[RMDB]
RNA sequence: GGGAACGACUCGAGUAGAGUCGAAAACAACAGCGUAAUCGCGUCUUGACGUGAUCUAGUUAGCAUUGACUGAAUGCUAACUUUAUUGUCUGUCAUAGACAAUACGCUGUUCUAAUGACAGUGAUACGAUAUAGUGGUAUUUCGAUAUUACUAUAUCAAAAGAAACAACAACAACAAC
Reactivity to 2A3 in 0.01 (KOAc 150mM, MgCl2 10mM, bicine 150mM(pH8.5), 24C), signal-to-noise 2, nucleotides 027 to 126: c050a000a000c000a000g010c000g000u030a060a080u100c080g030c070g160u010c070u070u150g050a000c000g070u030g000a010u000c000u000a010g000u010u000a000g000c000a000u030u080g300a300c240u270g300a110a000u000g000c000u000a010a000c000u000u000u010a030u010u030g060u000c030u060g040u050c010a020u100a060g010a000c010a000a010u000a000c000g000c000u000g000u000u000c000u060a150a150u100g120a060c050a090g090u050g210a070u170a300c290

The record gives the reactivity of an RNA of 177 nucleotides to 2A3. The reactions ran in a buffer of 150 mM KOAc, 10 mM MgCl2 and 150 mM bicine (pH 8.5), at 24 C. For 2A3 the reverse transcriptase was SuperScript II with manganese. For 2A3, 2,784 sequencing reads were counted.